RNA sequence: GGGAACGACUCGAGUAGAGUCGAAAAGAUAUGGAGUGUGGACAUGCUACGGGAUCGGAAACGAUCCUAGUAGCAACAGCCACCUCCUAAGUCAAAACAAUAGUCCCGCUUCGGCGGGACUAUUGAACAUGAGGUAUAACUUCGGUUAUACCUCAUGAAAAGAAACAACAACAACAAC
Reactivity to DMS in 0.01 (KOAc 150mM, MgCl2 10mM, bicine 150mM(pH8.5), 24C), signal-to-noise 5, nucleotides 027 to 126: g000a040u000a300u010g000g000a020g020u010g030u000g010g000a040c100a180u000g010c000u000a000c000g000g000g010a010u000c000g010g000a080a080a190c000g000a010u000c000c000u000a020g030u000a000g010c000a000a030c230a160g000c010c000a010c000c000u000c000c000u000a020a060g010u000c020a070a090a130a220c000a010a010u000a000g010u000c000c000c000g020c010u000u010c220g020g000c010g000g000g000a000c000u000a000u000u000g010a070a180
Reactivity to 2A3 in 0.01 (KOAc 150mM, MgCl2 10mM, bicine 150mM(pH8.5), 24C), signal-to-noise 2, nucleotides 027 to 126: g030a000u050a040u100g020g000a010g010u300g000u020g050g010a030c070a180u060g020c000u000a000c010g000g000g010a000u000c010g010g050a100a050a040c000g000a000u030c030c000u030a020g000u010a000g020c000a010a000c010a000g030c000c000a010c000c000u000c000c000u000a060a010g030u010c020a010a030a130a220c000a000a020u000a000g020u000c000c020c010g020c010u050u080c220g180g000c000g000g030g100a000c000u010a000u000u000g000a010a000

Source information:
This 177-nucleotide RNA was probed chemically with DMS and 2A3. For DMS, 6,780 sequencing reads were counted. As a SHAPE reagent, 2A3 marks flexible, mostly unpaired nucleotides at the ribose 2'-OH. For 2A3 the reverse transcriptase was SuperScript II with manganese. The reactions ran in a buffer of 150 mM KOAc, 10 mM MgCl2 and 150 mM bicine (pH 8.5), at 24 C.